Source: RMDB library OK2TST, as collected in RNAgym.
This 177-nucleotide RNA was probed chemically with DMS and 2A3.
[RMDB]
RNA sequence: GGGAACGACUCGAGUAGAGUCGAAAAUCACGCUGUCGUCGUCAAUGCUUUCCAUCCUGAUCGGAGUGCUCGUGGGUAUGCAGUUCAAGCUCACCCCAACCCAGACAGCAAGCAUCGGCAUUGCAACAAUGCCGGGGAGAUUCGUCUCCCCGGCAUUAAAAGAAACAACAACAACAAC
Reactivity to DMS in 0.01 (KOAc 150mM, MgCl2 10mM, bicine 150mM(pH8.5), 24C), signal-to-noise 3, nucleotides 027 to 126: u010c100a120c130g000c060u000g010u010c040g000u000c100g010u020c070a080a070u000g010c040u000u000u000c030c080a090u000c080c060u000g010a110u020c120g020g010a090g010u000g000c040u000c100g020u000g000g010g010u010a070u000g020c090a100g020u010u000c200a120a160g000c040u010c110a110c050c030c010c060a090a080c050c010c030a110g000a080c100a050g000c060a070a040g000c030a060u000c080g010g040c000a080u010u000g000c070a120a070c120
Reactivity to 2A3 in 0.01 (KOAc 150mM, MgCl2 10mM, bicine 150mM(pH8.5), 24C), signal-to-noise 2, nucleotides 027 to 126: u070c010a020c040g010c020u010g010u070c020g010u010c020g020u050c030a020a050u070g020c000u110u070u000c030c030a060u050c010c010u110g080a150u050c040g050g010a040g040u050g040c020u040c150g090u110g010g030g000u060a070u130g000c030a020g010u140u170c050a090a060g000c010u040c050a080c000c020c010c000a020a030c020c000c000a030g000a100c010a010g050c010a020a020g000c010a020u070c070g020g000c030a040u020u090g050c010a050a020c030
2A3 adducts were read by reverse transcription with SuperScript II with manganese.